RNA sequence: GGGAACGACUCGAGUAGAGUCGAAAAAGUACGGCCAUCGAUCGGCGCUCGAUCAGACAGCGCCAGCGCGGCCAUAUGAUCCAGGCCGUGAUCUGGCCGACGGCGCCUGCGCGAUCGGCCGAUCGUAGCAAUGAGGGAGGUUCGCCUCCCUCAUUGCAAAAGAAACAACAACAACAAC
Reactivity to DMS in 0.01 (KOAc 150mM, MgCl2 10mM, bicine 150mM(pH8.5), 24C), signal-to-noise 2, nucleotides 027 to 126: a110g000u000a070c050g010g000c000c040a100u010c020g010a030u000c070g000g020c000g010c060u010c090g000a070u000c060a100g010a170c170a070g010c060g020c000c010a050g020c100g000c010g020g010c000c000a070u010a020u000g000a020u000c090c150a100g010g010c110c110g030u010g000a020u010c000u000g010g000c010c000g000a030c060g000g010c000g050c050c030u000g000c080g010c180g000a010u000c040g020g010c000c010g010a030u010c010g000u010a140
Reactivity to 2A3 in 0.01 (KOAc 150mM, MgCl2 10mM, bicine 150mM(pH8.5), 24C), signal-to-noise 2, nucleotides 027 to 126: a020g140u060a070c020g020g030c000c000a060u010c000g000a020u020c030g000g000c040g040c090u120c100g110a240u070c000a020g160a250c040a050g040c010g000c100c000a040g000c070g000c010g000g020c020c000a050u150a070u170g080a000u030c030c050a090g000g080c000c060g000u040g020a080u020c040u040g000g030c010c000g000a010c000g010g020c010g010c040c010u110g000c130g000c000g010a000u030c030g000g040c010c010g000a010u040c030g020u030a010